[RMDB]
RNA sequence: GGGAACGACUCGAGUAGAGUCGAAAAGAUAUGGAAUGGUUUGGUCGAUAAGUCCUGAUCGGAAACGAUCAGGGACUUUUGACGACUGAUCAUUCCUAAGUCAAAGUAGAAAGUUCGCUUUCUACAAGACCAGUUGGUACUUCGGUACCAACUGGUCAAAAGAAACAACAACAACAAC
Reactivity to 2A3 in 0.01 (KOAc 150mM, MgCl2 10mM, bicine 150mM(pH8.5), 24C), signal-to-noise 1, nucleotides 027 to 126: g000a010u030a030u030g000g000a010a000u000g030g100u090u230u300g180g000u030c090g080a130u090a300a000g000u000c010c000u000g000a000u000c000g000g000a020a010a010c010g010a000u000c010a020g000g000g040a040c000u050u040u240u300g300a300c090g000a010c010u000g010a000u010c020a020u020u070c000c000u000a000a010g000u030c010a170a050a060g010u030a030g020a030a090a000g040u050u130c300g000c110u000u000u000c000u010a020c020a030a000